Chemical mapping of a 177-nucleotide RNA with 2A3 and DMS. The RNA was probed in 150 mM KOAc, 10 mM MgCl2 and 150 mM bicine (pH 8.5) at 24 C.

[RMDB]
RNA sequence: GGGAACGACUCGAGUAGAGUCGAAAAACCGCUGCCCGCUGCCUUUAUGGCACCCGACGCCUCGGGAUAGGCCGGGCGGGAGCUGCCAGCCCGUCCAAGCGUCGAAGCCCCCGGAGAUCCGUAAUGGGGAAAGAAUAGCAUUCGUGCUAUUCUUUCCAAAAGAAACAACAACAACAAC
Reactivity to 2A3 in 0.01 (KOAc 150mM, MgCl2 10mM, bicine 150mM(pH8.5), 24C), signal-to-noise 4, nucleotides 027 to 126: a000c030c010g010c040u030g030c000c000c010g020c030u030g020c010c010u080u200u170a150u190g010g000c000a020c010c020c010g030a030c030g060c020c040u080c070g040g000g010a040u090a060g040g030c030c030g040g000g000c010g010g010g000a050g040c080u090g030c020c010a040g000c000c000c000g000u000c010c000a040a020g010c020g040u040c010g030a040a010g010c000c000c020c000c000g020g020a050g000a060u030c010c010g020u080a080a150u170g080g010
Reactivity to DMS in 0.01 (KOAc 150mM, MgCl2 10mM, bicine 150mM(pH8.5), 24C), signal-to-noise 3, nucleotides 027 to 126: a100c040c030g000c050u010g000c010c030c000g000c100u000g020c020c020u000u010u010a070u060g040g000c030a070c100c070c010g000a140c140g010c070c080u020c060g010g000g000a090u000a060g000g010c010c040g010g000g010c020g010g000g010a100g020c100u010g000c010c010a210g000c010c010c010g010u000c020c010a090a100g000c020g020u030c060g020a110a120g000c020c000c020c010c010g020g000a070g000a060u000c000c010g010u010a070a060u040g050g010